[RMDB]
RNA sequence: GGGAACGACUCGAGUAGAGUCGAAAACAUGCGCGUCAGAAGGAUCGUGUGCAUACGGAGUCACGGGCCCUUCUGCUCCGUUGUGGGCAUGUCGAAUUCUAAAUCUUACGAUUGAGCCUCGGCGCGGUCUAGGCAGCCUGUUCGCGGGUUGUCUAGAAAAAGAAACAACAACAACAAC
Reactivity to 2A3 in 0.01 (KOAc 150mM, MgCl2 10mM, bicine 150mM(pH8.5), 24C), signal-to-noise 9, nucleotides 027 to 126: c050a040u170g020c020g000c010g050u060c020a070g020a090a020g070g000a030u060c010g020u030g030u100g070c020a010u070a130c060g050g040a040g050u070c040a040c080g030g050g010c030c000c000u090u060c020u020g000c000u000c000c010g050u050u170g040u090g040g030g000c020a020u040g040u070c030g040a040a060u120u050c030u150a070a060a110u040c040u100u150a060c070g030a050u020u100g050a020g020c000c000u020c010g000g000c010g000c000g000g010
Reactivity to DMS in 0.01 (KOAc 150mM, MgCl2 10mM, bicine 150mM(pH8.5), 24C), signal-to-noise 9, nucleotides 027 to 126: c080a080u030g010c010g010c020g010u000c010a050g010a080a050g000g000a130u010c010g010u010g020u030g010c050a090u020a080c150g000g000a090g010u020c060a070c090g010g000g000c080c020c020u010u010c050u000g000c040u000c030c030g010u010u010g020u010g000g000g010c010a070u010g000u020c060g010a090a100u020u020c080u010a060a060a050u020c050u010u030a120c120g000a030u000u010g000a110g010c140c040u000c050g000g000c010g010c020g000g000

Source: RMDB library OK1LIB, as collected in RNAgym. The record gives the reactivity of an RNA of 177 nucleotides to 2A3 and DMS. For 2A3, 66,234 sequencing reads were counted. DMS adducts were read by reverse transcription with MarathonRT.